An RNA of 177 nucleotides, treated with DMS and 2A3 and read out base by base. For 2A3 the reverse transcriptase was SuperScript II with manganese. For DMS, 8,696 sequencing reads were counted. The reactions ran in a buffer of 150 mM KOAc, 10 mM MgCl2 and 150 mM bicine (pH 8.5), at 24 C.

[RMDB]
RNA sequence: GGGAACGACUCGAGUAGAGUCGAAAAGAUUCGCCGGAGCUCCUUCUCGGCUAUUCGCUUUUUCUUCCUUUCCUCUACCCACUGCUCGAGGGCCUCCUCCCUCGCCUUCGAGCCGGGUCUUGCAUCGCGUUAUAAGUUACUUCGGUAACUUAUAACGAAAAGAAACAACAACAACAAC
Reactivity to DMS in 0.01 (KOAc 150mM, MgCl2 10mM, bicine 150mM(pH8.5), 24C), signal-to-noise 6, nucleotides 027 to 126: g000a100u000u000c110g010c020c020g010g010a120g000c090u000c070c040u000u010c030u000c050g020g010c040u000a040u010u010c120g000c070u010u000u000u000u010c070u010u000c020c020u000u000u000c020c010u010c080u000a120c030c010c010a160c220u010g020c000u000c010g000a020g000g010g010c020c130u000c050c040u000c020c010c010u010c100g010c010c010u000u000c010g010a020g020c010c200g000g010g000u000c090u000u000g010c090a110u000c110g010
Reactivity to 2A3 in 0.01 (KOAc 150mM, MgCl2 10mM, bicine 150mM(pH8.5), 24C), signal-to-noise 3, nucleotides 027 to 126: g010a050u050u050c040g000c040c030g050g040a030g030c070u060c050c000u140u040c100u050c030g020g010c000u030a050u030u100c050g040c030u060u070u030u040u040c020u030u070c010c010u020u040u060c010c010u010c020u030a060c000c000c010a070c100u120g000c000u000c000g010a000g000g010g020c000c030u060c000c000u040c010c010c000u000c020g010c000c000u000u000c000g000a000g000c010c000g000g020g010u000c020u050u070g030c020a110u080c060g010